[RMDB]
RNA sequence: GGGAACGACUCGAGUAGAGUCGAAAAUCGUACGAGUACUCUCGAUCGUGUUCUCGAUCACGUGUGUGUGAACACGUACGUGAGUUCACGUACGAGAGAGUUCACGUACGUACGUGUACUCACGUACACGAGAACUCACUCUCACACGUUCACUCGACCAGAGGGUGACAUUCGUGUCACCCUCUGGAAAAGAAACAACAACAACAAC
Reactivity to 2A3 in 0.01 (KOAc 150mM, MgCl2 10mM, bicine 150mM(pH8.5), 24C), signal-to-noise 1, nucleotides 027 to 156: u140c050g060u130a070c020g000a010g000u080a060c060u070c020u020c050g030a130u050c050g030u000g100u090u000c040u030c010g080a220u090c030a010c070g020u010g000u000g010u030g000u000g020a030a030c000a020c110g000u010a000c000g010u000g000a000g000u020u020c000a000c010g000u000a010c050g000a000g000a000g010a020g120u200u130c080a070c120g140u290a010c020g010u000a000c020g000u010g000u010a010c000u000c030a010c000g000u000a000c020a000c000g120a070g100a000a000c030u010c040a030c020u080c000u040c010a060c000a000c060g000u120u130c090a080c060u040c000g090a020
The record gives the reactivity of an RNA of 207 nucleotides to 2A3.
The 2A3 profile rests on 773 reads.